[RMDB]
Overview:
Conditions: 150 mM KOAc, 10 mM MgCl2 and 150 mM bicine (pH 8.5), 24 C. An RNA of 177 nucleotides, treated with DMS and 2A3 and read out base by base. Values cover nucleotides 27 to 126. DMS (dimethyl sulfate) methylates the pairing face of unpaired adenines and cytosines. The 2A3 profile rests on 1,863 reads.
RNA sequence: GGGAACGACUCGAGUAGAGUCGAAAAUCAUAGGUGUGGUAGCUCAGGACCUCACCCCAUCCUCCCCUCCGCAGGGCUCGGCGCCUUCCCCGCAGUUACCUUUCCGGGGGCUCUGGUGCCUGGUGGAUAUCGAGUACUAGUUCGCUAGUACUCGAUAAAAAGAAACAACAACAACAAC
Reactivity to DMS in 0.01 (KOAc 150mM, MgCl2 10mM, bicine 150mM(pH8.5), 24C), signal-to-noise 4, nucleotides 027 to 126: u030c160a110u010a120g010g010u000g000u010g000g020u000a050g020c080u020c130a110g000g000a060c030c000u000c020a050c020c000c080c120a100u000c020c020u000c000c010c000c020u000c010c030g000c070a170g010g010g010c020u000c120g020g010c060g030c000c060u000u000c020c010c020c030g030c140a070g000u010u020a080c160c090u000u010u000c160c030g000g010g010g010g010c150u000c040u000g010g010u010g010c020c000u000g010g030u000g010g000a100
Reactivity to 2A3 in 0.01 (KOAc 150mM, MgCl2 10mM, bicine 150mM(pH8.5), 24C), signal-to-noise 1, nucleotides 027 to 126: u140c070a090u120a200g010g010u010g000u020g000g040u020a040g020c040u080c160a090g040g130a000c000c010u000c000a040c030c040c000c020a100u080c020c010u030c020c010c000c000u010c000c010g050c040a050g020g010g020c040u040c030g000g000c020g000c000c000u030u060c010c000c000c010g060c020a050g010u070u080a140c030c000u120u120u110c030c000g000g000g000g010g000c020u030c050u060g040g060u030g020c020c020u010g020g020u040g010g020a010